RNA sequence: GGGAACGACUCGAGUAGAGUCGAAAAGGUGGAGAUGCCAUGCCGACCCGAAGAGGAAGAAGAGGACAUGGACGCGAACCGUGAGUGGAACCCUCGAUCCUUUAUUGGGGGGUACACUCGAGGAGUGGCCAUUAUUAAGGUUCGCCUUAAUAAUGGCAAAAGAAACAACAACAACAAC
Reactivity to DMS in 0.01 (KOAc 150mM, MgCl2 10mM, bicine 150mM(pH8.5), 24C), signal-to-noise 6, nucleotides 027 to 126: g010g010u000g000g010a130g020a170u000g010c030c010a060u000g010c020c030g010a130c040c000c020g020a080a100g010a130g000g010a070a060g000a100a060g010a170g020g000a090c040a040u000g010g010a070c080g000c070g010a120a080c020c020g000u020g010a020g020u000g000g000a170a190c010c000c000u000c000g000a010u010c300c170u010u010u010a030u010u000g010g000g000g010g000g000u000a120c020a000c010u000c000g000a080g000g000a110g020u010g000
Reactivity to 2A3 in 0.01 (KOAc 150mM, MgCl2 10mM, bicine 150mM(pH8.5), 24C), signal-to-noise 5, nucleotides 027 to 126: g090g020u100g020g080a130g020a120u140g050c020c000a010u050g020c010c010g050a080c000c010c010g060a130a050g070a060g110g010a060a070g040a080a030g050a090g030g010a030c010a030u060g030g000a040c020g000c020g050a030a030c000c000g030u070g010a010g010u020g000g020a090a040c010c000c000u000c000g020a060u110c030c090u150u240u210a070u060u050g000g000g010g010g000g010u030a000c010a000c000u010c000g010a040g030g030a110g030u200g100